The record gives the reactivity of an RNA of 207 nucleotides to DMS and 2A3. Conditions: 150 mM KOAc, 10 mM MgCl2 and 150 mM bicine (pH 8.5), 24 C. Source: RMDB library OK3TST, as collected in RNAgym.

[RMDB]
RNA sequence: GGGAACGACUCGAGUAGAGUCGAAAAGAACUUAAAACAACAGCCCCACCUUCGUUGGCGCGUAAUACACCAGCCGACUGAGAAUUAGAACCAAAGUUCAGUCUUCCGACUAAUCUAGCAUUUCCACUUACGGUUAAAUCGGUGGUAACUAAAUUACCUAUGGUACCAGGUUCGCCUGGUACCAUAGAAAAGAAACAACAACAACAAC
Reactivity to DMS in 0.01 (KOAc 150mM, MgCl2 10mM, bicine 150mM(pH8.5), 24C), signal-to-noise 1, nucleotides 027 to 156: g000a020a060c060u030u000a050a090a070a170c020a070a120c040a100g020c060c020c000c060a120c130c040u000u000c160g010u010u000g010g050c020g020c060g000u000a160a160u000a110c000a060c020c030a120g020c010c040g020a070c020u000g030a060g020a070a120u000u010a110g000a160a070c060c010a040a080a070g020u010u000c020a110g010u000c020u000u000c000c040g010a140c140u000a020a020u000c020u000a030g010c010a090u000u000u020c030c000a020c020u000u000a110c110g000g000u000u000a070a030a070u010c060g030g000u000g000g000u000a050a030c040u000a030a000a090u000u000a080c060
Reactivity to 2A3 in 0.01 (KOAc 150mM, MgCl2 10mM, bicine 150mM(pH8.5), 24C), signal-to-noise 3, nucleotides 027 to 156: g030a050a010c080u070u070a110a020a020a050c070a000a060c020a070g050c000c000c000c000a030c020c000u050u020c040g010u000u040g000g000c020g000c020g070u060a080a110u100a250c060a070c050c020a010g010c000c010g000a000c000u010g010a000g030a080a080u170u090a080g050a070a020c060c030a160a010a000g000u040u040c020a040g010u000c030u090u050c030c010g050a060c050u060a030a030u050c030u030a030g010c020a110u060u050u000c010c000a040c040u050u110a030c080g040g020u040u060a070a100a060u090c000g000g030u010g040g000u020a010a010c030u100a040a090a140u300u290a040c090